RNA sequence: GGGAACGACUCGAGUAGAGUCGAAAAGGGCUUGAGCCAUCGCCCGAAUAAGAUGGAUGAUACAAGUCGACAUGGUACGCGACCUAGAACGUACUCAUUGAAGUGCGAAAGCACGAAGUCCGACGAGUCUGGGACGAUCAUCAGGCAAGACUUAGAAGAUUAAUCAGCGAUUCGUCGCUGAUUAAUCAAAAGAAACAACAACAACAAC
Reactivity to 2A3 in 0.01 (KOAc 150mM, MgCl2 10mM, bicine 150mM(pH8.5), 24C), signal-to-noise 4, nucleotides 027 to 156: g050g000g000c050u100u120g030a030g010c030c020a020u010c010g000c000c040c010g010a080a150u180a110a030g040a020u080g060g000a030u130g020a030u100a100c090a090a020g010u010c010g010a060c030a060u080g010g000u040a030c020g050c030g030a170c000c020u040a050g040a080a000c010g010u020a010c020u030c170a050u040u140g090a130a020g000u000g020c020g050a090a030a020g000c000a010c020g010a020a010g040u030c070c020g000a050c030g010a040g010u020c050u060g010g010g030a050c010g010a060u060c040a030u010c020a040g000g070c020a070a050g000a030c020u020u050a050g040a140a010
Reactivity to DMS in 0.01 (KOAc 150mM, MgCl2 10mM, bicine 150mM(pH8.5), 24C), signal-to-noise 3, nucleotides 027 to 156: g040g020g040c000u000u000g010a060g010c080c020a060u000c040g010c060c020c020g050a080a150u010a080a100g010a080u010g020g000a100u010g010a290u000a140c080a070a120g020u000c010g020a140c020a200u010g000g040u000a030c010g070c000g000a280c190c120u000a100g010a160a070c010g000u000a080c000u000c120a050u000u010g010a080a160g030u000g000c030g000a060a090a290g040c000a040c030g000a130a140g010u000c010c020g010a080c000g010a110g000u000c030u030g040g050g020a040c070g020a110u000c060a090u000c040a070g030g000c030a120a100g020a090c040u020u000a120g010a130a180
Notes
Source: RMDB library OK3TST, as collected in RNAgym. This 207-nucleotide RNA was probed chemically with 2A3 and DMS. Values are in units of 0.01, from 0 to 300, in steps of 10. The RNA was probed in 150 mM KOAc, 10 mM MgCl2 and 150 mM bicine (pH 8.5) at 24 C.